[RMDB]
RNA sequence: GGGAACGACUCGAGUAGAGUCGAAAAGAUAUGGAUUGGUCACGUGCACGUUGAAAUUAUUCAGAUGUCCGUAUCGGAAACGAUACGGACAUCUGAAUAAUGGAGUGCCGUGAGCCAAUCCUAAGUCCCUUCUAUAACUCUUCGGAGUUAUAGAAGGAAAAGAAACAACAACAACAAC
Reactivity to DMS in 0.01 (KOAc 150mM, MgCl2 10mM, bicine 150mM(pH8.5), 24C), signal-to-noise 1, nucleotides 027 to 126: g000a080u000a300u010g000g010a020u000u000g000g000u000c010a010c010g020u020g030c010a010c000g000u010u020g000a140a130a000u000u000a010u000u010c010a000g000a030u000g000u000c000c010g030u000a010u020c000g000g000a130a110a190c010g000a020u000a000c010g000g000a000c010a000u000c000u000g000a000a000u000a000a020u000g000g000a040g010u000g000c000c010g010u000g010a080g010c000c000a000a000u000c000c000u010a010a150g010u000c060
Overview
Structure probing data (DMS) for a 177-nucleotide construct. Values cover nucleotides 27 to 126. Conditions: 150 mM KOAc, 10 mM MgCl2 and 150 mM bicine (pH 8.5), 24 C.